[RMDB]
RNA sequence: GGGAACGACUCGAGUAGAGUCGAAAAGCGUACUACAAGCCGACGAAGGGUAGACCACAUCUAUGUACUGAACUUAUACUACCCACCAGAUCCCAAAUAGGAUCUGAGGUAUAUUAUUAAGUACAUAGAUGUGGUCUACCCAGAGGCUUGUAUCGCACGUAUACGGGAGGUUCGCCUCCCGUAUACGAAAAGAAACAACAACAACAAC
Reactivity to DMS in 0.01 (KOAc 150mM, MgCl2 10mM, bicine 150mM(pH8.5), 24C), signal-to-noise 1, nucleotides 027 to 156: g000c010g070u010a010c050u020a060c010a050a010g000c000c000g020a300c180g000a250a150g010g050g050u000a000g000a040c020c000a020c000a020u000c010u000a050u010g000u000a000c010u000g020a080a110c280u000u000a020u010a000c030u000a010c000c000c000a300c150c000a000g040a000u010c010c010c010a000a170a270u010a000g000g000a000u000c010u000g000a030g020g000u010a000u000a020u000u010a100u000u010a190a080g020u000a000c010a010u000a010g000a000u000g050u000g010g000u000c000u000a020c000c000c000a030g010a290g050g000c010u000u000g000u000a010u000c010g020c000a200